[RMDB]
Chemical mapping of a 207-nucleotide RNA with 2A3 and DMS. The RNA was probed in 150 mM KOAc, 10 mM MgCl2 and 150 mM bicine (pH 8.5) at 24 C.
RNA sequence: GGGAACGACUCGAGUAGAGUCGAAAAGAAAACUUGCCUUCUUCGAUCCAGCUCAUUACAAUUACACGGGAAAUUUAAUCAGACUCCUCCUCGUACUCAUCCUCGUCAGCAGCAUCCUCCGACAUGGGUGCGGGCUCGUCGGCAGGCGCCAGGAAAGGUAGAACCAGUUAUUCGUAACUGGUUCUACAAAAGAAACAACAACAACAAC
Reactivity to 2A3 in 0.01 (KOAc 150mM, MgCl2 10mM, bicine 150mM(pH8.5), 24C), signal-to-noise 3, nucleotides 027 to 156: g030a000a030a000a020c040u050u090g000c010c000u040u040c000u070u020c040g030a050u040c030c030a020g030c050u070c050a090u080u150a080c070a140a130u140u110a060c060a050c090g050g000g080a070a070a080u160u240u100a080a110u230c060a030g070a130c030u030c010c010u040c000c020u050c010g030u030a060c010u010c040a070u040c010c040u040c030g080u060c030a020g030c010a000g000c000a060u000c030c040u040c040c030g150a130c050a090u110g020g000g000u010g000c050g000g060g000c020u010c010g030u000c000g020g000c020a030g030g030c030g000c020c000a000g050g040a080a070a000g060
Reactivity to DMS in 0.01 (KOAc 150mM, MgCl2 10mM, bicine 150mM(pH8.5), 24C), signal-to-noise 2, nucleotides 027 to 156: g020a130a040a040a080c050u000u000g010c020c030u010u000c020u030u000c050g000a120u010c020c020a160g060c030u000c040a110u000u000a080c110a070a180u020u000a120c030a100c050g030g000g010a070a060a160u010u010u010a050a130u000c040a110g020a080c020u000c000c010u000c140c030u000c050g020u000a060c050u000c040a050u000c030c000u000c010g030u000c050a090g050c050a080g000c040a060u000c000c000u000c040c050g040a060c110a110u000g040g040g060u010g030c050g010g030g020c030u000c110g020u000c050g030g000c080a100g030g020c080g000c020c030a030g020g000a100a080a080g010